RNA sequence: GGGAACGACUCGAGUAGAGUCGAAAAGACACUCCCUUCUGAUGGUGAAUGGGAACUCCCUUCCUCCUGCAGCAGCCUGCCUGCAGCUGUCCUGGUAGAACAGUGUGGACAUUGCAGAAGCUGUCACCUCAAGUGGGAGAUUCGUCUCCCACUUGAGAAAAGAAACAACAACAACAAC
Reactivity to DMS in 0.01 (KOAc 150mM, MgCl2 10mM, bicine 150mM(pH8.5), 24C), signal-to-noise 3, nucleotides 027 to 126: g020a110c300a090c070u000c000c000c010u000u010c030u010g010a100u030g010g020u000g000a060a020u040g000g010g000a060a080c080u000c010c020c000u000u000c040c000u000c060c060u000g020c140a130g010c070a080g000c000c030u020g000c140c010u030g000c010a030g010c160u000g020u000c000c020u020g010g040u010a120g000a080a160c110a050g030u030g020u000g000g020a030c040a060u040u010g020c000a030g020a210a170g010c000u000g000u010c060a170c090
Reactivity to 2A3 in 0.01 (KOAc 150mM, MgCl2 10mM, bicine 150mM(pH8.5), 24C), signal-to-noise 8, nucleotides 027 to 126: g050a010c030a030c070u050c020c050c000u020u020c050u070g180a200u150g050g120u120g040a060a080u150g020g000g020a040a020c030u050c000c000c000u040u030c000c010u020c000c010u040g020c010a020g000c000a000g000c030c020u070g040c000c010u000g000c010a010g030c050u000g000u000c000c010u070g080g050u130a090g070a230a080c070a070g110u100g090u100g180g000a010c000a010u010u060g000c010a000g000a040a010g000c020u020g030u060c020a040c030
This 177-nucleotide RNA was probed chemically with DMS and 2A3. The reactions ran in a buffer of 150 mM KOAc, 10 mM MgCl2 and 150 mM bicine (pH 8.5), at 24 C. For DMS the reverse transcriptase was MarathonRT. Reactivities are rounded to 0.1 and cut off at 0 and 3. The data come from the RNA Mapping Database (RMDB), libraries RFM100 and RFMREP.